[RMDB]
RNA sequence: GGGAACGACUCGAGUAGAGUCGAAAAUGAGACAAGUUAACUAAGAGCUAAAUUGGAAUCCUCAGAGACCAAACGUUUGGAGUUUGAAAUGCAUUUAGAUGCACAAUGGAUAGUUGGAUUUGUCGAUGGAGAAGGAUGUUUUAAAGUUUCUCUCAAUCCUCUUCUCUCAGUUCGCUGAGAGAAGAGGAAAAGAAACAACAACAACAAC
Reactivity to 2A3 in 0.01 (KOAc 150mM, MgCl2 10mM, bicine 150mM(pH8.5), 24C), signal-to-noise 2, nucleotides 027 to 156: u140g010a040g010a010c030a030a050g020u030u070a110a010c050u040a090a040g040a000g080c030u060a150a000a080u080u080g030g000a070a050u060c010c000u070c060a070g000a020g020a140c020c000a010a060a000c040g020u040u140u130g050g010a060g000u000u000u080g040a130a050a010u020g010c020a020u090u160u220a130g000a170u020g000c010a020c020a070a070u070g000g030a020u030a050g040u040u030g010g020a030u040u000u050g050u050c010g000a020u050g030g000a030g000a030a030g040g020a030u050g030u040u200u000u050a070a210a000g010u000u000u010c000u000c010u000c040a020a010u080